[RMDB]
RNA sequence: GGGAACGACUCGAGUAGAGUCGAAAAACCAACCACCCAAGGAUGAUCGGCACCGCGAAGGUACGGAUCAUUCUGGGGAUGAACGGUCGCGCCGCGUGCCUGUCGGGCGGGACGGAGCCCGUCGGCGUGUGUAACACCACUUCGGUGGUGUUACACAAAAAGAAACAACAACAACAAC
Reactivity to DMS in 0.01 (KOAc 150mM, MgCl2 10mM, bicine 150mM(pH8.5), 24C), signal-to-noise 2, nucleotides 027 to 126: a050c010c010a130a160c100c020a210c020c010c000a060a010g020g010a020u000g010a000u000c010g000g010c040a000c000c010g020c190g010a140a090g010g040u000a030c000g000g000a020u000c010a010u010u010c000u010g000g000g000g000a070u010g020a120a100c230g010g000u010c110g000c010g020c010c000g030c010g000u010g000c030c000u000g000u000c010g000g000g020c070g010g000g000a020c010g010g000a140g010c000c020c000g010u010c010g020g010c030g020
Reactivity to 2A3 in 0.01 (KOAc 150mM, MgCl2 10mM, bicine 150mM(pH8.5), 24C), signal-to-noise 2, nucleotides 027 to 126: a000c000c000a000a040c040c030a030c020c000c010a040a030g020g000a000u000g000a010u000c040g090g020c030a010c020c020g070c220g240a260a150g020g000u030a030c040g150g010a000u000c000a010u000u000c000u000g000g000g000g000a090u140g060a050a040c110g030g050u090c050g010c010g020c040c000g000c000g020u030g000c030c000u040g020u010c040g010g160g030c040g050g020g000a020c030g000g000a070g010c020c010c000g000u130c080g000g000c000g000
Record summary:
An RNA of 177 nucleotides, treated with DMS and 2A3 and read out base by base. Values cover nucleotides 27 to 126. It was measured as part of the RMDB library OK2TRN. DMS adducts were read by reverse transcription with MarathonRT.